[RMDB]
Chemical mapping of a 177-nucleotide RNA with DMS.
RNA sequence: GGGAACGACUCGAGUAGAGUCGAAAACUAGGGAGGGGCCUCGAGUGUCCUCCGAGGCCCUCCGAACUCCAGCCCUCCUCGGUGCCCAGCGCUGCCCCCAAGACUGGAGGAGAGGUGGUCCGCGGGACCAGACUCAACUGUUCGCAGUUGAGUCUGGAAAAGAAACAACAACAACAAC
Reactivity to DMS in 0.01 (KOAc 150mM, MgCl2 10mM, bicine 150mM(pH8.5), 24C), signal-to-noise 1, nucleotides 027 to 126: c050u030a120g020g020g010a060g000g000g010g010c020c020u000c010g010a030g010u010g010u000c090c020u010c070c000g010a020g010g010c010c000c000u000c010c020g000a110a150c090u020c030c010a100g020c000c020c010u000c020c030u000c040g020g010u000g000c050c050c030a040g030c060g000c030u000g010c030c010c000c030c080a140a110g010a100c060u000g000g010a070g020g020a080g000a090g010g010u020g020g000u000c040c040g010c110g000g020g030a200
The RNA was probed in 150 mM KOAc, 10 mM MgCl2 and 150 mM bicine (pH 8.5) at 24 C. It was measured as part of the RMDB library OK2TRN.